[RMDB]
Structure probing data (2A3 and DMS) for a 177-nucleotide construct. Values are in units of 0.01, from 0 to 300, in steps of 10. For DMS, 5,144 sequencing reads were counted. Values cover nucleotides 27 to 126. Source: RMDB library OK2TRN, as collected in RNAgym. Conditions: 150 mM KOAc, 10 mM MgCl2 and 150 mM bicine (pH 8.5), 24 C.
RNA sequence: GGGAACGACUCGAGUAGAGUCGAAAAGGAGUGCUACCGAAAGGUAGCACUCCAACAAAUCGGUGUAAGAGCAGCCCGACUUACACCGUGCGGCACAGCGGAAACGCUGAUGUCGUAUACUGGGCUACGUAGCUAAUAGUUUCGACUAUUAGCUACGAAAAGAAACAACAACAACAAC
Reactivity to 2A3 in 0.01 (KOAc 150mM, MgCl2 10mM, bicine 150mM(pH8.5), 24C), signal-to-noise 3, nucleotides 027 to 126: g000g000a000g000u010g000c010u000a000c010c010g070a080a070a070g010g000u000a000g000c000a000c000u000c000c000a000a000c000a000a020a010u090c000g020g000u000g000u000a000a010g010a020g050c060a010g000c010c000c000g010a010c010u000u000a000c000a000c010c000g000u040g010c010g000g000c000a000c000a010g000c000g010g030a070a060a020c010g000c000u010g000a040u000g000u000c000g000u000a000u010a000c060u110g000g000g000c000u010a030
Reactivity to DMS in 0.01 (KOAc 150mM, MgCl2 10mM, bicine 150mM(pH8.5), 24C), signal-to-noise 3, nucleotides 027 to 126: g020g020a030g050u000g000c010u000a010c000c000g000a130a130a150g030g020u000a010g010c010a000c000u000c000c010a030a050c120a050a100a060u020c010g020g020u000g000u000a000a000g000a080g010c080a060g000c000c010c000g020a100c000u010u000a000c000a010c000c000g010u000g010c000g020g000c000a010c010a000g000c010g000g000a150a090a170c000g030c000u000g000a050u000g030u000c000g040u000a040u000a040c300u010g010g010g000c000u000a180